Structure probing data (2A3 and DMS) for a 177-nucleotide construct. Reactivities are given for positions 27 through 126. For DMS the reverse transcriptase was MarathonRT. For 2A3, 18,255 sequencing reads were counted.
RNA sequence: GGGAACGACUCGAGUAGAGUCGAAAAAGUGACGAGAAACGCUGGCCUGGUUAAGAGACGUGGAGGUGGGACGGGAGAGACUCUGGGAGAGAAGUGGAAAGCUCGUCUGAAUCAGAUGUCGGCCCUGCUAUAGUGAUGUAUUCGUACAUCACUAUAGAAAAGAAACAACAACAACAAC
Reactivity to 2A3 in 0.01 (KOAc 150mM, MgCl2 10mM, bicine 150mM(pH8.5), 24C), signal-to-noise 7, nucleotides 027 to 126: a010g140u080g040a050c060g020a040g080a150a110a010c050g010c030u030g020g010c010c000u020g050g000u050u060a140a040g070a010g000a120c030g030u060g020g030a120g020g080u210g030g010g030a050c040g010g000g000a070g010a010g000a020c030u040c080u160g000g060g000a070g010a020g020a110a030g040u110g030g070a110a050a020g020c010u010c020g040u010c020u030g030a020a040u050c010a030g040a100u130g020u030c000g010g020c020c000c000u030g030
Reactivity to DMS in 0.01 (KOAc 150mM, MgCl2 10mM, bicine 150mM(pH8.5), 24C), signal-to-noise 8, nucleotides 027 to 126: a090g010u000g010a070c050g000a120g010a100a100a110c120g000c030u010g010g010c030c010u010g000g010u000u010a070a090g010a080g010a060c070g010u000g020g010a080g010g010u010g010g010g000a100c090g000g010g000a090g010a130g000a070c070u000c070u010g000g000g010a130g010a080g010a120a090g010u000g010g000a070a100a140g000c030u000c020g000u000c010u010g010a080a070u010c070a050g000a060u010g010u000c020g000g000c020c040c030u000g000